[RMDB]
The record gives the reactivity of an RNA of 207 nucleotides to 2A3. Values cover nucleotides 27 to 156. High 2A3 reactivity points to a flexible backbone, as in loops and unpaired stretches. Conditions: 150 mM KOAc, 10 mM MgCl2 and 150 mM bicine (pH 8.5), 24 C. Source: RMDB library OK3TST, as collected in RNAgym. For 2A3, 817 sequencing reads were counted.
RNA sequence: GGGAACGACUCGAGUAGAGUCGAAAACAGAAGAGUCUUAUAUGGAAGAUGGGCUGACAGAGGCGGAUGAGAGCGGUGAGAUGGAGUUUCCUCAAGCUAGUUGGGAUCUUCCCAUCAAAUCGCAACUGGGAGCUGAGGGAAUGAAGAACUUGCGAGGCAGUCGAAGAUACUUCGGUAUCUUCGACUGAAAAGAAACAACAACAACAAC
Reactivity to 2A3 in 0.01 (KOAc 150mM, MgCl2 10mM, bicine 150mM(pH8.5), 24C), signal-to-noise 1, nucleotides 027 to 156: c060a010g160a120a020g020a080g000u010c020u140u270a190u070a030u270g030g010a010a030g000a000u060g030g050g000c030u050g050a030c030a030g060a060g050g040c030g020g010a000u110g060a040g020a000g030c010g000g000u050g000a020g020a060u020g000g010a070g000u040u060u030c010c010u030c020a020a040g040c040u070a070g140u030u050g010g040g000a000u000c020u100u020c030c020c000a010u040c050a040a060a020u050c030g030c090a000a050c050u060g010g010g120a030g010c060u030g020a010g030g010g010a010a010u070g010a000a010g050a060a030c020u040u080g030c050g030a050g040g090